[RMDB]
RNA sequence: GGGAACGACUCGAGUAGAGUCGAAAAAGCAGUGCGGUACCCAACCCCCCAACGGCCCGGGCGGUCACGUGGCGGACCAGGAGCAAGAUCAGCAGUGAGUUGAUACCGACCACCAUCCGAUGCGCUGGCAAGCAGUUAGCUUCGGCUAACUGCUUGCAAAAGAAACAACAACAACAAC
Reactivity to 2A3 in 0.01 (KOAc 150mM, MgCl2 10mM, bicine 150mM(pH8.5), 24C), signal-to-noise 1, nucleotides 027 to 126: a000g030c040a000g010u010g050c000g050g000u150a090c010c020c010a040a000c000c000c020c000c010c070a050a060c090g000g000c000c000c000g000g010g010c100g040g030u020c000a010c010g110u130g100g000c010g000g040a060c030c020a060g010g010a030g050c020a040a030g050a110u080c020a000g080c020a070g050u030g300a050g030u090u030g030a060u090a090c080c000g020a090c000c040a010c000c040a090u030c000c000g020a090u070g000c010g030c050u030g050

An RNA of 177 nucleotides, treated with 2A3 and read out base by base.
For 2A3, 841 sequencing reads were counted.
The data come from the RNA Mapping Database (RMDB), library OK1LIB.